[RMDB]
RNA sequence: GGGAACGACUCGAGUAGAGUCGAAAAAACUACUUCUUCGGAAGUAGUUAUUGGGUGGGUCUAAUAAGCCCAAGGUGCCAGGUUCGACCCUUGCUGGGCGCAUCACCGACCGAUUCGUCGGUCGGAAUGCGCAUCUAUUCUUCGGAAUAGAUGCGCAAAAAGAAACAACAACAACAAC
Reactivity to 2A3 in 0.01 (KOAc 150mM, MgCl2 10mM, bicine 150mM(pH8.5), 24C), signal-to-noise 3, nucleotides 027 to 126: a000a010c000u000a010c000u010u010c010u010u050c240g070g000a010a000g000u000a000g000u000u010a150u090u090g010g020g050u110g030g010g000u000c030u020a080a070u090a260a080g010c010c010c020a010a040g080g020u070g020c010c020a000g050g000u050u120c080g050a100c020c010c000u010u040g010c030u040g020g030g000c040g000c010a050u110c050a010c030c000g000a000c010c000g000a010u020u030c200g030u000c010g060g000u000c010g000g010a000a020
Reactivity to DMS in 0.01 (KOAc 150mM, MgCl2 10mM, bicine 150mM(pH8.5), 24C), signal-to-noise 5, nucleotides 027 to 126: a020a000c000u000a000c000u000u000c000u000u000c210g020g010a020a010g010u000a000g010u000u010a010u000u000g020g010g010u000g010g000g010u000c030u000a090a070u010a110a190g010c010c000c010a050a090g000g000u000g000c020c030a080g000g010u000u000c080g010a110c030c010c020u000u010g030c070u000g000g020g010c040g010c080a070u010c100a190c000c000g000a000c000c000g000a020u000u000c190g020u000c000g010g010u000c000g000g010a030a030